Chemical mapping of a 207-nucleotide RNA with DMS and 2A3. Values are in units of 0.01, from 0 to 300, in steps of 10. The 2A3 profile rests on 3,756 reads. The reactions ran in a buffer of 150 mM KOAc, 10 mM MgCl2 and 150 mM bicine (pH 8.5), at 24 C.
RNA sequence: GGGAACGACUCGAGUAGAGUCGAAAACGGAAGCAUUAAAACCAUUCGAGCUAGUCAAUGCGUGGCGUGUCUCUCCGCAGCGUGUUGGCGAAUGUAAAGAGUGACUAAGCAUGUAGUACCGAGGAUCAUAAGAGCAAUUCGUUCGCGAAUUGCUCAACACUGUAACAAGCUUCGGCUUGUUACAGUGAAAAGAAACAACAACAACAAC
Reactivity to DMS in 0.01 (KOAc 150mM, MgCl2 10mM, bicine 150mM(pH8.5), 24C), signal-to-noise 2, nucleotides 027 to 156: c020g010g030a130a140g010c060a060u000u020a010a100a110a110c030c010a070u000u000c020g020a250g040c000u000a240g030u000c000a010a030u000g020c020g030u010g030g020c070g040u000g020u000c080u000c010u000c170c000g030c000a090g010c030g000u000g000u000u000g030g020c040g020a050a040u000g020u010a060a080a140g020a070g020u000g000a070c050u000a080a180g030c050a040u000g020u000a080g020u000a070c010c040g010a200g000g010a120u010c060a070u000a050a150g010a050g010c000a010a050u000u000c010g040u000u000c250g020c030g010a010a040u000u000g000c000u000c000a000a090
Reactivity to 2A3 in 0.01 (KOAc 150mM, MgCl2 10mM, bicine 150mM(pH8.5), 24C), signal-to-noise 4, nucleotides 027 to 156: c040g020g030a060a030g010c020a030u090u090a040a050a020a100c060c000a020u080u070c070g020a030g050c030u050a030g030u000c000a010a010u010g000c010g020u030g090g000c000g010u030g030u030c030u020c010u020c070c000g010c010a010g000c010g000u020g000u000u000g020g000c020g010a020a020u080g020u040a030a080a030g020a010g010u030g020a020c040u050a020a030g040c030a030u080g020u080a040g020u040a090c000c040g010a070g060g020a070u110c030a080u150a200a090g000a000g020c000a000a000u000u010c010g020u020u070c100g010c000g140a000a000u000u000g000c000u000c000a000a000